Annotation:
Structure probing data (DMS and 2A3) for a 177-nucleotide construct. For 2A3, 7,475 sequencing reads were counted. The data come from the RNA Mapping Database (RMDB), library TTRDES. The reactions ran in a buffer of 150 mM KOAc, 10 mM MgCl2 and 150 mM bicine (pH 8.5), at 24 C. For DMS, 6,148 sequencing reads were counted.
[RMDB]
RNA sequence: GGGAACGACUCGAGUAGAGUCGAAAAGAUAUGGACGUGUACAGCUUUUGACGAGCUCAUAUCGGAAACGAUAUGUGCUCGAUAAGCUGUAACACGUCCUAAGUCAAAAGGAAGCUUCGGCUUCCAAUCAUUUGCAAUACUUCGGUAUUGCAAAUGAAAAAGAAACAACAACAACAAC
Reactivity to DMS in 0.01 (KOAc 150mM, MgCl2 10mM, bicine 150mM(pH8.5), 24C), signal-to-noise 5, nucleotides 027 to 126: g010a060u000a300u000g000g000a000c000g060u000g000u010a010c000a010g000c000u000u000u000u010g020a260c130g000a000g010c000u000c000a000u000a010u000c010g000g000a170a090a230c000g010a000u000a010u000g000u000g000c000u000c000g020a040u000a010a020g000c000u000g000u000a060a040c000a000c000g050u000c000c000u000a020a080g000u010c050a110a070a200a170g000g000a040a010g020c000u000u010c280g040g010c010u000u000c000c000a070a090
Reactivity to 2A3 in 0.01 (KOAc 150mM, MgCl2 10mM, bicine 150mM(pH8.5), 24C), signal-to-noise 2, nucleotides 027 to 126: g030a010u100a040u210g000g000a000c000g010u000g020u010a020c010a010g010c020u100u120u190u260g300a210c030g000a000g020c000u020c020a000u010a000u010c000g000g020a070a100a020c010g000a000u010a000u000g030u010g000c010u000c000g000a000u000a020a000g000c000u020g000u000a000a000c000a000c000g010u000c000c000u000a000a000g000u010c010a010a030a000a110g000g010a020a000g000c000u110u160c300g230g000c000u000u000c030c000a010a020